The record gives the reactivity of an RNA of 177 nucleotides to DMS and 2A3. The reactions ran in a buffer of 150 mM KOAc, 10 mM MgCl2 and 150 mM bicine (pH 8.5), at 24 C. For 2A3 the reverse transcriptase was SuperScript II with manganese.
RNA sequence: GGGAACGACUCGAGUAGAGUCGAAAAGCUCAGGGGUUCGCCCCUGAGCAAAAGAUACCGGUCUCGGUAUCAAAGUCAGUCCGACAGACCAGAGGGAACUGAAAAGGGAGGGGUUCGCCCCUCCCAAGAAUUAAUUUAGCUUCGGCUAAAUUAAUUCAAAAGAAACAACAACAACAAC
Reactivity to DMS in 0.01 (KOAc 150mM, MgCl2 10mM, bicine 150mM(pH8.5), 24C), signal-to-noise 1, nucleotides 027 to 126: g010c010u000c000a000g010g010g020g020u010u010c240g020c010c000c000c000u010g000a000g040c000a000a010a050a120g000a010u000a000c010c000g010g020u010c300u000c000g000g010u000a010u000c010a040a080a150g000u020c020a050g000u000c020c040g000a160c100a130g000a160c030c000a060g010a180g000g000g000a060a050c050u000g000a050a090a090a170g010g000g000a020g000g000g010g020u000u010c220g010c000c000c000c000u000c000c000c000a000a020
Reactivity to 2A3 in 0.01 (KOAc 150mM, MgCl2 10mM, bicine 150mM(pH8.5), 24C), signal-to-noise 1, nucleotides 027 to 126: g020c000u000c000a010g000g040g000g010u020u100c100g120c000c000c000c020u000g010a000g000c000a000a000a010a000g000a000u010a000c000c030g070g160u220c300u150c270g000g000u020a000u020c030a010a020a000g060u040c010a010g010u030c010c010g020a070c050a050g080a070c010c020a050g040a070g070g030g020a070a110c020u020g000a070a010a080a110g020g030g010a010g020g050g000g010u040u030c140g050c000c000c000c000u000c000c000c000a000a000